[RMDB]
RNA sequence: GGGAACGACUCGAGUAGAGUCGAAAACGCACCCCACCGGGGCACUGAGCGUGGCCCAGGAGAAACUGAUCUCGAGACCGCUGAACUGGCGGUCGAAGUUUAUUAUGGAAAGAUAGAGGCCGUACGCUAAAGCUACGUAUUUCGAUACGUAGCUUUAAAAAGAAACAACAACAACAAC
Reactivity to DMS in 0.01 (KOAc 150mM, MgCl2 10mM, bicine 150mM(pH8.5), 24C), signal-to-noise 6, nucleotides 027 to 126: c100g020c140a180c050c000c010c040a150c140c070g000g010g000g020c100a050c100u000g020a100g020c050g020u000g020g010c000c000c030a100g010g000a150g000a060a070a100c080u000g000a090u000c050u000c060g000a290g010a010c000c000g000c000u000g010a120a130c220u000g010g010c000g000g010u000c000g000a050a070g010u000u000u010a060u020u000a100u000g020g010a100a070a070g010a100u000a090g010a140g010g010c040c020g020u000a060c120g020c080
Reactivity to 2A3 in 0.01 (KOAc 150mM, MgCl2 10mM, bicine 150mM(pH8.5), 24C), signal-to-noise 2, nucleotides 027 to 126: c010g000c010a080c000c010c000c010a060c090c070g020g000g000g010c060a030c140u110g110a050g060c000g000u050g020g040c020c000c010a010g040g020a070g050a070a080a000c090u090g030a080u080c030u030c050g030a080g000a010c000c010g000c020u010g040a200a120c070u150g090g000c000g000g070u000c000g000a000a010g000u010u060u030a090u070u070a090u110g070g080a140a020a020g080a060u110a030g060a160g080g000c050c020g030u050a020c020g000c040
Chemical mapping of a 177-nucleotide RNA with DMS and 2A3. For 2A3 the reverse transcriptase was SuperScript II with manganese. Conditions: 150 mM KOAc, 10 mM MgCl2 and 150 mM bicine (pH 8.5), 24 C.